Structure probing data (2A3 and DMS) for a 177-nucleotide construct. The DMS profile rests on 1,835 reads. The 2A3 profile rests on 4,485 reads.
RNA sequence: GGGAACGACUCGAGUAGAGUCGAAAAGAUAUGGAUGUGGUGACGAGCAGUGGAGGUCGGAAACGACUCCCCACCCACUGAACUACUCGUCUCACAUCCUAAGUCAAAAGUUGGCUUCGGCCAACAAUCUCUAGAAACGGUUCGCCGUUUCUAGAGAAAAAGAAACAACAACAACAAC
Reactivity to 2A3 in 0.01 (KOAc 150mM, MgCl2 10mM, bicine 150mM(pH8.5), 24C), signal-to-noise 2, nucleotides 027 to 126: g040a020u070a020u190g000g000a010u000g000u010g000g200u190g010a010c000g030a000g090c020a000g000u010g020g000a000g050g000u010c020g000g020a080a070a020c030g020a030c020u060c020c010c000c010a000c000c000c000a010c000u030g000a040a020c050u220a070c000u230c010g000u010c020u000c000a000c000a010u000c000c000u010a050a030g000u020c030a070a050a060a150g020u000u010g010g000c010u090u110c300g170g000c020c000a000a000c000a000a030
Reactivity to DMS in 0.01 (KOAc 150mM, MgCl2 10mM, bicine 150mM(pH8.5), 24C), signal-to-noise 3, nucleotides 027 to 126: g000a000u000a300u000g010g000a020u010g050u000g000g010u000g000a010c020g000a040g010c040a030g010u000g000g020a110g000g000u000c010g010g000a110a080a160c010g000a020c010u000c040c030c020c000a300c040c020c000a030c060u000g000a050a030c020u030a300c010u000c000g000u000c010u000c000a000c010a010u010c000c000u000a000a040g000u010c030a090a020a100a150g030u020u010g020g010c000u000u010c190g010g000c010c000a000a000c000a070a070
Record summary:
2A3 adducts were read by reverse transcription with SuperScript II with manganese. It was measured as part of the RMDB library TTRDEL.